[RMDB]
RNA sequence: GGGAACGACUCGAGUAGAGUCGAAAACAAUAACUUGAAAUAAUCAUGGGAGAGCCCACUCCAACUCCAGCUGCCACUUACUCCGCUGCCGACCCCACUUCUGCACCCAAGUUGGCCGACCUGGCUGGUCCACAUGUUAGUUCGCUAACAUGUGGACAAAAGAAACAACAACAACAAC
Reactivity to 2A3 in 0.01 (KOAc 150mM, MgCl2 10mM, bicine 150mM(pH8.5), 24C), signal-to-noise 4, nucleotides 027 to 126: c020a040a110u290a110a040c130u110u140g070a050a040a160u300a100a130u140c100a120u140g060g000g000a050g000a030g030c040c010c040a010c020u010c010c010a000a020c010u040c050c010a030g010c020u040g020c020c000a060c010u070u110a040c030u020c070c030g040c010u050g020c000c020g050a100c000c000c010c010a060c030u070u040c030u050g020c010a060c010c010c030a010a080g040u050u060g030g000c020c000g100a170c010c050u050g030g000c010u020g020
Reactivity to DMS in 0.01 (KOAc 150mM, MgCl2 10mM, bicine 150mM(pH8.5), 24C), signal-to-noise 2, nucleotides 027 to 126: c110a210a080u060a060a140c080u000u000g000a020a080a040u080a120a110u010c080a080u010g000g000g000a070g000a110g000c020c000c040a080c050u040c010c010a180a100c050u010c060c060a110g000c060u000g010c010c010a110c040u010u000a090c040u000c010c010g070c010u020g000c020c020g000a150c020c060c000c000a060c040u010u090c020u000g110c040a110c010c020c040a020a100g020u000u000g020g000c000c050g040a060c020c040u020g000g040c000u040g000

Structure probing data (2A3 and DMS) for a 177-nucleotide construct. For 2A3 the reverse transcriptase was SuperScript II with manganese. For 2A3, 1,977 sequencing reads were counted. Conditions: 150 mM KOAc, 10 mM MgCl2 and 150 mM bicine (pH 8.5), 24 C.